[RMDB]
RNA sequence: GGGAACGACUCGAGUAGAGUCGAAAAGACCCUAUUCGUAGGGUCACACCACCCGCAAGGGGAGGGUUUUCUAACUCUCCGGGUGUUGACGACACCCCGGCCCCAGAACGGUAGAGUUCGCUCUACCUACACCGUCAAGAUUCGUCUUGACGGUGUAAAAAGAAACAACAACAACAAC
Reactivity to DMS in 0.01 (KOAc 150mM, MgCl2 10mM, bicine 150mM(pH8.5), 24C), signal-to-noise 1, nucleotides 027 to 126: g000a020c000c010c030u000a010u000u020c170g030u010a010g010g040g020u010c010a000c080a170c010c040a230c300c020c000g000c150a070a300g000g000g010g010a020g000g000g010u000u030u000u020c290u000a030a030c000u000c000u000c010c020g040g000g000u000g000u000u010g000a050c000g000a230c020a000c000c010c000c010g000g000c010c000c020c030a040g020a060a080c300g000g000u000a000g000a010g000u000u010c160g010c000u000c000u000a000c000c000